[RMDB]
RNA sequence: GGGAACGACUCGAGUAGAGUCGAAAAUUGGCGAAUGCCUGUGGAUCUACAUUUGUUGCGGGUUCGAGACCCGUCAGAGCCCGGCUCUGUAGCUCAAUGGUAGAGCGGUGUAUUCACGUAAACUUGUAAAAGACACGUGCCUUCGGGCACGUGUCAACAGGAUCUAUAGGUUCGCCUAUAGAUCCUGAAAAGAAACAACAACAACAAC
Reactivity to 2A3 in 0.01 (KOAc 150mM, MgCl2 10mM, bicine 150mM(pH8.5), 24C), signal-to-noise 2, nucleotides 027 to 156: u050u070g010g020c010g110a190a040u230g040c010c010u030g000u000g000g000a020u040c020u050a040c010a030u040u080u180g100u050u010g010c010g000g000g000u010u020c000g000a000g000a010c000c040c010g020u010c000a020g000a000g020c210c300c090g090g000c010u010c000u020g000u030a010g010c010u020c020a050a040u200g300g080u170a010g000a000g010c010g010g000u000g010u010a040u000u040c000a000c050g060u070a090a110a140c060u080u070g070u190a070a090a000a000g000a000c000a000c010g000u020g020c000c010u030u060c150g000g000g000c000a000c000g010u000g000u010c000a000a000
Reactivity to DMS in 0.01 (KOAc 150mM, MgCl2 10mM, bicine 150mM(pH8.5), 24C), signal-to-noise 2, nucleotides 027 to 156: u000u000g010g050c040g070a070a060u000g040c040c000u000g050u000g010g010a070u000c010u010a040c030a060u010u000u000g020u000u000g030c020g000g000g060u000u000c070g010a300g000a040c000c020c000g000u000c070a170g000a110g020c020c100c050g050g020c020u010c040u000g010u010a100g020c040u000c030a050a090u000g000g000u030a070g020a050g040c010g000g030u010g000u000a090u000u000c020a050c030g020u010a060a070a120c090u010u000g010u000a070a120a040a190g000a030c000a000c000g030u000g000c000c010u000u000c300g000g040g050c010a000c010g000u020g010u020c000a020a090

Chemical mapping of a 207-nucleotide RNA with 2A3 and DMS. DMS adducts were read by reverse transcription with MarathonRT. Source: RMDB library M2RFPK, as collected in RNAgym. For 2A3 the reverse transcriptase was SuperScript II with manganese. The DMS profile rests on 2,486 reads.